This 177-nucleotide RNA was probed chemically with DMS and 2A3. Conditions: 150 mM KOAc, 10 mM MgCl2 and 150 mM bicine (pH 8.5), 24 C. The 2A3 profile rests on 1,916 reads.
RNA sequence: GGGAACGACUCGAGUAGAGUCGAAAACAGAGAGCCUCGCGCCGGUCGACUCGCUGCGAAUGAACCAGCGCCAGGCGCGGCCUUAUGCGCCUGGCCGGGUGCUGGUGUGUGGUGUGGCGUAUCCGACCACCUAGGAACCAUUCGUGGUUCCUAGGUGAAAAGAAACAACAACAACAAC
Reactivity to DMS in 0.01 (KOAc 150mM, MgCl2 10mM, bicine 150mM(pH8.5), 24C), signal-to-noise 3, nucleotides 027 to 126: c070a100g010a160g000a180g000c030c010u000c160g010c060g000c050c030g020g000u000c020g010a080c070u000c020g020c030u000g020c020g010a090a100u010g000a130a040c010c010a020g010c010g030c010c000a030g010g020c000g010c220g010g020c050c050u020u020a120u000g020c210g020c010c000u000g000g020c010c020g000g020g000u000g000c000u010g010g000u000g020u000g020u000g010g020u010g020u010g020g000c050g000u010a100u010c040c010g000a180c040
Reactivity to 2A3 in 0.01 (KOAc 150mM, MgCl2 10mM, bicine 150mM(pH8.5), 24C), signal-to-noise 2, nucleotides 027 to 126: c030a000g100a000g000a020g200c000c060u110c080g080c070g000c030c020g000g040u050c010g050a010c030u010c020g030c030u050g010c000g070a040a190u190g030a080a020c000c000a000g000c010g020c000c000a010g000g000c020g000c020g020g020c020c000u270u250a130u210g120c130g030c040c010u110g100g000c000c000g020g000g000u030g010c000u000g020g010u020g020u000g010u040g060g130u160g000u030g020g030c020g010u030a080u000c010c010g030a030c030